This 177-nucleotide RNA was probed chemically with 2A3 and DMS. For 2A3, 3,266 sequencing reads were counted. The reactions ran in a buffer of 150 mM KOAc, 10 mM MgCl2 and 150 mM bicine (pH 8.5), at 24 C. The DMS profile rests on 3,487 reads. It was measured as part of the RMDB library OK2TST.
[RMDB]
RNA sequence: GGGAACGACUCGAGUAGAGUCGAAAAACAACUAGUAAAGUGUGUAAGGCACCUAUCCCUCUGCAACUGAAAGAAGAAUUCUUACUCAAGGGUCUUGCCAAGAAUCUUAAAAAUUUGCAGCUGCAACAGCUGCAAGUGUAUUCGUACACUUGCAGCUAAAAGAAACAACAACAACAAC
Reactivity to 2A3 in 0.01 (KOAc 150mM, MgCl2 10mM, bicine 150mM(pH8.5), 24C), signal-to-noise 3, nucleotides 027 to 126: a000c050a010a030c050u110a020g140u190a100a100a110g030u070g010u020g050u140a090a140g150g000c010a020c020c000u040a110u060c000c010c000u050c020u020g010c010a020a040c040u060g040a120a070a040g080a070a000g030a050a150u070u010c010u030u040a070c020u030c070a030a030g090g000g050u010c010u030u030g000c000c000a000a040g020a040a060u000c030u090u110a100a080a070a120a130u100u050u060g000c010a010g030c030u070g060c040a060a030c010
Reactivity to DMS in 0.01 (KOAc 150mM, MgCl2 10mM, bicine 150mM(pH8.5), 24C), signal-to-noise 4, nucleotides 027 to 126: a040c080a090a100c140u020a100g010u010a090a100a090g020u000g010u000g000u000a090a120g000g000c020a020c040c050u000a130u010c020c000c000u030c100u000g000c030a030a040c090u010g000a060a090a090g010a050a050g000a050a080u000u000c010u000u000a100c120u000c040a060a070g030g010g010u010c030u010u010g010c190c080a040a070g000a070a030u000c030u000u000a040a090a060a120a130u000u000u000g000c020a040g010c130u000g020c070a040a080c180